[RMDB]
RNA sequence: GGGAACGACUCGAGUAGAGUCGAAAAAGCACGGUUUUUGAGGACGCAUUUUGACCGUGCGGUAAUGCCCUCCUUUACACUUUCUCGCAUGGUGCGGGAGUGUGGAGAGGAAACAAAAGCUAGUCUCGAUAGGCGGUUAACUUCGGUUAACCGCCAAGCACCUCAUUGUGUUCGCACAAUGAGGUGCAAAAGAAACAACAACAACAAC
Reactivity to 2A3 in 0.01 (KOAc 150mM, MgCl2 10mM, bicine 150mM(pH8.5), 24C), signal-to-noise 1, nucleotides 027 to 156: a000g000c000a000c000g000g000u050u000u000u000u000g050a090g030g030a020c030g000c100a140u010u000u000u000g010a000c000c000g000u040g000c040g000g050u060a030a020u180g000c000c000c000u060c010c000u000u010u000a000c010a000c000u020u160u030c010u000c000g020c060a120u270g260g050u290g170c000g010g000g000a020g000u000g000u000g000g000a010g000a030g000g010a030a060a000c010a000a000a000a020g090c050u130a070g010u000c010u000c040g090a060u180a100g000g000c040g000g000u000u000a020a000c020u050u050c130g000g040u010u000a000a000c000c000g000c000c000a000a000